The record gives the reactivity of an RNA of 207 nucleotides to 2A3. Values cover nucleotides 27 to 156. Source: RMDB library OK3TST, as collected in RNAgym.
RNA sequence: GGGAACGACUCGAGUAGAGUCGAAAACUAUCUAGUUUUCUAGAUAGAGCAUGCUUUUGCAUGCGAACCUGCGUAUGACACAUCCAGCUUUUUUUGCUCGCAGGGGCUCAUCCGAGAAAGGACUUUUGUCCGAUCGGAUGUGUCAGGGAUGGUCAAAAGUAUCAUGAGCGUUCGCGCUCAUGAUACUAAAAGAAACAACAACAACAAC
Reactivity to 2A3 in 0.01 (KOAc 150mM, MgCl2 10mM, bicine 150mM(pH8.5), 24C), signal-to-noise 2, nucleotides 027 to 156: c010u000a000u000c000u000a000g100u150u100u260u300c000u020a010g010a000u000a000g000a020g000c000a020u000g010c010u130u000u300u300g000c000a000u000g010c000g020a040a040c010c000u000g000c040g030u110a040u140g050a000c030a010c000a160u000c000c010a030g000c010u000u040u110u090u050u300u300g000c000u040c010g000c000a020g020g000g000g000c000u010c000a000u020c010c000g010a000g090a070a170a040g010g000a020c030u270u250u190u270g000u000c000c000g000a010u000c000g010g010a000u000g000u000g000u000c000a020g010g080g000a000u040g000g000u000c000a030a000a110